Chemical mapping of a 207-nucleotide RNA with 2A3. The RNA was probed in 150 mM KOAc, 10 mM MgCl2 and 150 mM bicine (pH 8.5) at 24 C.
[RMDB]
RNA sequence: GGGAACGACUCGAGUAGAGUCGAAAAGCUCUAACGCGCGUCACGGGCGGAAGUGACGCCACGAGUGCCUACACGUUCGACAACAAUAAUGGCGGGAGUGGUGGGUAUCUUGACGGUCCAGAACUCUAUCCCGACCAACUCAUCUUGUCGUUAGAGACCCGGUUAUCAUUUUCGAAUGAUAACCGGGAAAAGAAACAACAACAACAAC
Reactivity to 2A3 in 0.01 (KOAc 150mM, MgCl2 10mM, bicine 150mM(pH8.5), 24C), signal-to-noise 2, nucleotides 027 to 156: g010c000u000c010u020a090a050c020g130c010g020c000g050u010c010a020c010g010g070g110c120g130g060a120a020g010u000g000a000c030g020c000c020a030c040g020a030g000u050g020c020c010u070a050c110a030c100g080u100u070c020g100a000c000a060a000c040a060a190u160a130a180u150g020g000c000g000g030g000a070g030u210g040g030u070g020g030g000u120a200u060c040u050u120g070a060c080g060g020u050c040c020a040g040a060a030c010u000c010u060a120u110c010c010c010g080a140c060c000a070a080c020u090c050a140u030c020u060u050g040u040c000g000u020u040a020g010a000g030a050